[RMDB]
RNA sequence: GGGAACGACUCGAGUAGAGUCGAAAAGCCUUUAUUGUCAUUUAAAAUUUAUAUUGUUGCCGUCUCAUUCAUAUCGAAUGAUUAAUUCGUCGGAAAAUGACAAGCCCGAAUAGUUUUACUAUUCGGGAAGAUCAGCAUUAUUCGUAAUGCUGAUCUUAAAAGAAACAACAACAACAAC
Reactivity to DMS in 0.01 (KOAc 150mM, MgCl2 10mM, bicine 150mM(pH8.5), 24C), signal-to-noise 6, nucleotides 027 to 126: g000c020c000u010u010u020a050u010u000g000u000c000a000u000u000u010a090a060a090a090u020u030u060a150u040a170u050u000g000u010u010g010c020c010g010u000c120u000c010a020u000u000c010a110u030a100u050c170g000a010a000u000g000a070u020u020a070a130u020u020c140g010u000c010g000g000a110a020a010a000u000g000a010c000a020a030g010c000c000c000g000a010a010u000a010g000u010u040u030u030a040c000u000a000u000u000c000g010g010g010
Reactivity to 2A3 in 0.01 (KOAc 150mM, MgCl2 10mM, bicine 150mM(pH8.5), 24C), signal-to-noise 9, nucleotides 027 to 126: g060c010c000u020u090u070a120u010u010g000u000c000a000u000u020u140a090a160a100a130u160u300u140a260u110a150u110u170g100u110u100g030c000c000g020u000c020u010c040a000u020u010c020a020u100a150u300c080g010a010a010u010g030a000u010u070a040a170u150u050c020g020u000c010g010g000a050a050a000a010u000g000a000c000a010a020g060c000c000c000g010a000a000u000a000g010u020u090u180u300a040c000u000a000u000u000c000g000g000g000